Overview: An RNA of 177 nucleotides, treated with 2A3 and DMS and read out base by base. The data come from the RNA Mapping Database (RMDB), library M2PK90. The 2A3 profile rests on 3,045 reads. The reactions ran in a buffer of 150 mM KOAc, 10 mM MgCl2 and 150 mM bicine (pH 8.5), at 24 C.
RNA sequence: GGGAACGACUCGAGUAGAGUCGAAAAGGAAAUAGGUAUGCGGUCGCAAUUAAAAUAUUGCGACAAACUGGCACACAGCAAGCGAGUGGUGACGAGUGCACACAAGUCGUUCCCAGCCAGAAAAAAACUAAUCUACACUGUUCGCAGUGUAGAUUAGAAAAGAAACAACAACAACAAC
Reactivity to 2A3 in 0.01 (KOAc 150mM, MgCl2 10mM, bicine 150mM(pH8.5), 24C), signal-to-noise 2, nucleotides 027 to 126: g050g010a020a130a050u140a070g020g050u100a040u120g080c080g090g000u000c010g000c010a000a040u040u110a060a110a060a110u240a030u050u030g000c000g000a000c000a000a000a000c000u010g030g010c010a010c000a010c000a040g020c030a100a040g070c020g050a030g060u110g040g040u040g040a050c050g040a030g080u200g020c040a000c010a000c000a020a030g020u000c000g000u000u020c000c000c000a010g040c020c010a030g080a120a030a000a000a000a000a010
Reactivity to DMS in 0.01 (KOAc 150mM, MgCl2 10mM, bicine 150mM(pH8.5), 24C), signal-to-noise 2, nucleotides 027 to 126: g000g000a030a070a080u010a100g020g000u000a020u000g000c100g010g020u000c000g000c000a010a010u010u000a080a070a130a110u000a020u000u000g010c000g010a010c000a030a080a050c080u000g000g000c040a180c070a050c050a120g000c080a030a130g000c070g000a060g010u000g000g030u010g010a050c050g000a070g020u000g000c050a040c080a050c090a080a030g000u000c000g000u000u010c010c000c000a110g010c100c090a080g010a000a000a040a070a050a080a100